[RMDB]
RNA sequence: GGGAACGACUCGAGUAGAGUCGAAAAGAUAUGGAUCGUUCAUGACAUGCUACGGUAUCGGAAACGAUACUGUAGCAACAGCAUGACGAUCCUAAGUCAAAGAGAAGAUUACUUCGGUAAUCUUCUCGACACCUGAGUGGUUCGCCACUCAGGUGUCAAAAGAAACAACAACAACAAC
Reactivity to DMS in 0.01 (KOAc 150mM, MgCl2 10mM, bicine 150mM(pH8.5), 24C), signal-to-noise 2, nucleotides 027 to 126: g010a040u020a080u000g000g000a010u010c000g010u020u010c000a010u000g000a040c070a260u020g010c000u000a000c000g000g010u000a020u000c000g020g010a020a010a060c000g020a010u000a000c000u050g000u000a000g020c000a010a010c190a180g010c000a000u000g000a020c000g010a000u010c000c000u000a010a050g000u000c000a100a130a230g010a000g000a010a000g000a010u000u000a010c000u000u020c210g040g000u000a010a000u000c000u000u000c000u000c000
Reactivity to 2A3 in 0.01 (KOAc 150mM, MgCl2 10mM, bicine 150mM(pH8.5), 24C), signal-to-noise 2, nucleotides 027 to 126: g020a000u000a010u070g010g000a000u010c020g090u300u200c040a000u010g050a080c100a190u300g000c000u000a000c000g000g020u000a000u000c000g020g000a000a020a000c000g000a000u000a010c000u000g000u010a000g000c000a000a000c020a000g000c000a000u000g010a010c000g010a000u000c000c000u000a000a000g010u000c050a190a190a070g010a000g000a010a000g000a010u000u010a010c010u020u100c300g020g020u020a000a000u000c000u000u000c000u000c000
An RNA of 177 nucleotides, treated with DMS and 2A3 and read out base by base.
Values cover nucleotides 27 to 126.
The 2A3 profile rests on 7,795 reads.